[RMDB]
RNA sequence: GGGAACGACUCGAGUAGAGUCGAAAAGCUUAUUAAAUAAGAAGUGAGUGAGUGACUGGUAUGAGGACUAAGGGACCAAGGGAGCAAUGGAACAUAACAAACUUGGUAUGUGACAGAGGUGGCAUUGCUGAAAACCAGUGAAAUGAGGGAAUUGGUCGGCAAUCUAGCUAUUCGUAGCUAGAUUGCCAAAAGAAACAACAACAACAAC
Reactivity to 2A3 in 0.01 (KOAc 150mM, MgCl2 10mM, bicine 150mM(pH8.5), 24C), signal-to-noise 1, nucleotides 027 to 156: g000c000u120u040a020u050u260a300a010a020u140a070a040g010a080a000g000u040g030a000g030u040g040a000g010u070g020a040c000u030g070g060u150a080u170g030a060g060g000a000c000u010a030a030g050g000g040a030c000c000a040a050g000g010g000a020g010c030a000a060u040g010g040a070a000c010a090u130a080a080c030a010a130a030c000u040u040g060g000u020a020u060g050u060g000a010c040a090g060a040g000g040u010g030g020c010a010u000u030g020c000u040g030a000a080a020a020c000c000a000g000u000g130a000a050a050u060g010a040g000g030g040a040a020u080u050g070g020u160c000